[RMDB]
Structure probing data (DMS and 2A3) for a 177-nucleotide construct. Reactivities are given for positions 27 through 126. For 2A3 the reverse transcriptase was SuperScript II with manganese. Conditions: 150 mM KOAc, 10 mM MgCl2 and 150 mM bicine (pH 8.5), 24 C. DMS (dimethyl sulfate) methylates the pairing face of unpaired adenines and cytosines.

RNA sequence: GGGAACGACUCGAGUAGAGUCGAAAACUAUGGAAGAACGACGUGUGUUUCUGCACCCGUGAGCUGUCGAUCCUUGUAUGUCAUACACCGUAAGCCCAAUCUUCCUUCGUAAGACGUUAUGAUCAGCCCCUGAGCAGAUUUUCGAAUCUGCUCAGGGAAAAGAAACAACAACAACAAC
Reactivity to DMS in 0.01 (KOAc 150mM, MgCl2 10mM, bicine 150mM(pH8.5), 24C), signal-to-noise 1, nucleotides 027 to 126: c150u030a060u030g020g000a040a090g010a030a100c090g030a300c030g030u000g010u000g000u030u000u050c020u000g020c000a030c070c110c020g000u040g010a200g000c070u000g000u000c050g000a090u120c010c000u000u000g040u000a000u000g000u080c150a190u020a020c000a000c130c090g030u030a030a010g010c100c040c000a050a050u000c090u000u000c000c020u000u000c280g000u020a090a080g000a040c210g000u000u000a080u120g000a030u000c090a060g000c200
Reactivity to 2A3 in 0.01 (KOAc 150mM, MgCl2 10mM, bicine 150mM(pH8.5), 24C), signal-to-noise 3, nucleotides 027 to 126: c010u030a120u160g060g010a080a000g000a090a070c010g080a040c040g100u070g020u000g030u030u090u070c030u030g000c040a030c000c090c000g060u110g010a040g080c080u030g050u130c010g020a000u000c020c010u020u030g110u120a110u070g080u060c060a010u040a110c020a070c080c040g000u010a090a000g110c030c000c000a030a050u020c070u040u020c010c040u040u050c050g060u040a020a030g040a060c040g080u030u130a060u140g130a150u050c020a000g020c010